Source information: This 177-nucleotide RNA was probed chemically with DMS and 2A3. The reactions ran in a buffer of 150 mM KOAc, 10 mM MgCl2 and 150 mM bicine (pH 8.5), at 24 C. 2A3 adducts were read by reverse transcription with SuperScript II with manganese.
RNA sequence: GGGAACGACUCGAGUAGAGUCGAAAAGAAAGCGUCAUUCGACGAAAGAGAAGAUAAUGCCGCAUUAGGUUACGUGCGCAACCUAAUCAGCGCACGACAAGAAAUCUCAUUCGCAGAAAUAAGAAAAGCUAAUUAGCCUAUUCGUAGGCUAAUUAGCAAAAGAAACAACAACAACAAC
Reactivity to DMS in 0.01 (KOAc 150mM, MgCl2 10mM, bicine 150mM(pH8.5), 24C), signal-to-noise 4, nucleotides 027 to 126: g060a130a060a100g000c050g000u010c050a040u000u000c030g000a190c040g010a040a070a080g000a040g000a030a110g000a190u010a070a030u020g000c070c020g000c120a120u020u020a040g000g000u000u000a060c070g040u000g000c050g000c000a090a040c120c070u040a050a080u050c140a100g000c000g010c010a010c040g010a140c220a060a060g000a020a070a110u010c050u010c050a110u020u000c010g000c230a060g000a040a050a060u020a030a130g000a040a070a150a080
Reactivity to 2A3 in 0.01 (KOAc 150mM, MgCl2 10mM, bicine 150mM(pH8.5), 24C), signal-to-noise 8, nucleotides 027 to 126: g100a020a080a010g020c010g010u010c010a060u080u090c060g080a080c070g070a070a120a020g090a000g030a080a020g030a060u080a100a050u110g020c030c000g020c080a090u080u130a030g010g020u030u030a030c020g010u020g010c010g000c030a030a040c010c030u150a150a110u100c100a040g000c000g000c010a000c010g000a000c010a030a040g090a040a060a020u040c020u000c010a090u140u080c040g000c030a020g090a100a080a030u190a070a030g100a040a090a010a000